[RMDB]
RNA sequence: GGGAACGACUCGAGUAGAGUCGAAAAGAAAUUCCCGAUCGGCGGUAAAGUCCGCGAGCCGAACGAAAAAGGUUUGGCAGGAACCGGUGAGAUUCCGUUACCGACAGUAUAGUCUGGAUGGAAGAAGGUAGCCUCCUCUCGUUCGCGAGAGGAGGAAGCUGAAAUACUUGUUCGCAAGUAUUUCAGCAAAAGAAACAACAACAACAAC
Reactivity to DMS in 0.01 (KOAc 150mM, MgCl2 10mM, bicine 150mM(pH8.5), 24C), signal-to-noise 2, nucleotides 027 to 156: g020a070a130a210u010u010c010c010c030g000a120u000c050g030g010c010g060g010u010a070a140a120g000u000c000c010g010c000g010a140g020c010c010g020a060a300c000g000a060a100a130a300a260g020g000u000u020u000g000g000c010a080g010g020a020a050c150c040g020g030u000g010a200g000a300u000u000c030c030g010u000u010a040c010c020g000a070c030a120g000u010a170u010a090g010u000c050u020g030g010a110u000g000g000a100a130g010a100a060g000g000u000a140g040c000c000u010c000c010u000c000u020c010g000u000u000c280g010c020g000a010g020a070g040g020a000g020g010a000a000
Reactivity to 2A3 in 0.01 (KOAc 150mM, MgCl2 10mM, bicine 150mM(pH8.5), 24C), signal-to-noise 1, nucleotides 027 to 156: g030a010a070a000u010u010c000c000c000g020a250u110c020g030g000c010g010g030u000a040a020a000g000u030c000c000g010c000g020a030g030c010c000g000a000a000c010g110a250a080a000a080a000g150g000u000u010u000g010g000c000a000g010g010a000a000c060c010g000g050u000g010a070g000a010u020u030c000c000g000u000u060a030c000c000g000a000c000a010g000u030a080u060a150g110u020c090u050g060g070a090u060g070g030a080a090g030a060a020g230g000u080a070g030c000c000u010c030c000u000c000u000c010g040u060u040c130g010c010g050a020g010a000g000g050a000g000g000a020a000